[RMDB]
RNA sequence: GGGAACGACUCGAGUAGAGUCGAAAAGAUUACAUUUACAACGACUCCUAGCAGGAGUAGCACCAAGCCUCCGGCAAACAGUGCACUCUCCAUGUACGUGUAAAGGUAUGCGUUGCCAUACUGGUUGCCGACAAUAAAGUUUCGACUUUAUUGUCGGAAAAGAAACAACAACAACAAC
Reactivity to 2A3 in 0.01 (KOAc 150mM, MgCl2 10mM, bicine 150mM(pH8.5), 24C), signal-to-noise 2, nucleotides 027 to 126: g070a010u090u200a020c020a020u080u070u060a060c070a190a030c060g090a030c030u000c010c020u040a060g060c060a020g000g030a000g020u010a070g010c000a000c020c020a070a000g030c000c010u160c080c140g030g000c040a030a110a000c020a030g010u000g030c010a090c090u070c000u020c000c020a070u050g030u040a040c050g000u010g010u030a050a080a030g040g000u010a000u010g030c100g180u100u170g070c070c000a000u000a030c030u030g100g060u070u130g030
Reactivity to DMS in 0.01 (KOAc 150mM, MgCl2 10mM, bicine 150mM(pH8.5), 24C), signal-to-noise 4, nucleotides 027 to 126: g010a140u010u000a040c050a070u000u000u010a040c030a070a130c090g020a120c060u010c030c030u010a190g030c170a160g000g000a030g020u000a130g010c040a040c010c050a090a250g010c030c010u010c160c130g040g030c030a050a100a080c290a080g020u010g000c030a140c070u010c020u010c050c070a200u000g010u000a040c060g000u000g000u000a030a070a090g020g000u000a010u000g000c020g030u010u010g000c100c000a030u000a030c010u000g010g020u000u010g010